[RMDB]
RNA sequence: GGGAACGACUCGAGUAGAGUCGAAAAACUAGUUACGACUAGAAUCUUAAUGAUGACUACAUUGUAAAUUCUUGAUAGGAAGAGUAUGAAACAUAAUGAGUACUAAAACAACCAAGCUGACAAAAAACCACAAGCCAACUUUCGAGUUGGCUUGUGGAAAAGAAACAACAACAACAAC
Reactivity to 2A3 in 0.01 (KOAc 150mM, MgCl2 10mM, bicine 150mM(pH8.5), 24C), signal-to-noise 1, nucleotides 027 to 126: a000c000u000a000g000u000u020a000c190g030a060c080u000a000g000a080a080u090c060u000u090a140a200u150g120a000u030g050a000c000u200a050c050a030u010u010g020u060a000a030a000u000u120c000u000u090g150a060u150a140g070g160a170a000g020a000g080u060a020u080g220a000a110a000c120a000u300a230a000u030g030a020g050u050a000c080u030a000a000a060a060c060a090a050c000c000a030a000g170c110u020g030a000c060a000a170a000a000a000a000
Chemical mapping of a 177-nucleotide RNA with 2A3. 2A3 adducts were read by reverse transcription with SuperScript II with manganese. The RNA was probed in 150 mM KOAc, 10 mM MgCl2 and 150 mM bicine (pH 8.5) at 24 C.